[RMDB]
RNA sequence: GGGAACGACUCGAGUAGAGUCGAAAAGAACACGUCUCGGGACGACGCUAAACUCGCCCUGGUCGGGACGGGUUUAACGACCCCUCGGGUUUCCUAGUUCCUAAAACUAGGUGGUGGAGUCAUAUAAAAAACUUCUACACGUUCGCGUGUAGAAGAACAUAAUGAUAAUCUUCGGAUUAUCAUUAUGAAAAGAAACAACAACAACAAC
Reactivity to DMS in 0.01 (KOAc 150mM, MgCl2 10mM, bicine 150mM(pH8.5), 24C), signal-to-noise 2, nucleotides 027 to 156: g000a080a090c020a060c030g020u000c030u010c000g000g010g030a060c020g030a220c000g080c000u000a070a090a120c130u000c010g040c000c000c000u000g030g050u000c160g020g020g030a020c010g010g010g010u000u010u010a020a090c000g000a130c010c000c050c010u000c050g020g010g000u010u010u000c030c000u010a050g010u000u000c050c080u000a070a040a050a070c020u000a050g030g020u000g010g000u010g000g000a220g010u010c050a090u010a230u030a050a070a080a090a090a070c000u000u000c000u000a000c000a010c000g020u000u010c300g020c020g020u000g050u000a000g000a010a000g000a050a070
Reactivity to 2A3 in 0.01 (KOAc 150mM, MgCl2 10mM, bicine 150mM(pH8.5), 24C), signal-to-noise 3, nucleotides 027 to 156: g070a040a030c100a020c070g040u000c020u030c060g040g030g020a050c200g020a030c010g050c160u060a060a020a020c000u000c010g030c000c000c010u060g080g130u170c080g030g010g030a070c030g030g000g000u000u020u040a030a020c020g040a030c030c000c000c010u040c030g040g000g000u010u030u020c010c000u010a010g010u010u050c030c010u100a050a040a010a010c010u020a050g050g000u040g020g000u070g010g070a100g050u080c080a060u150a020u300a220a060a020a010a010a040c000u000u000c000u000a000c000a000c010g020u040u040c210g020c000g050u000g000u000a000g000a000a000g000a000a000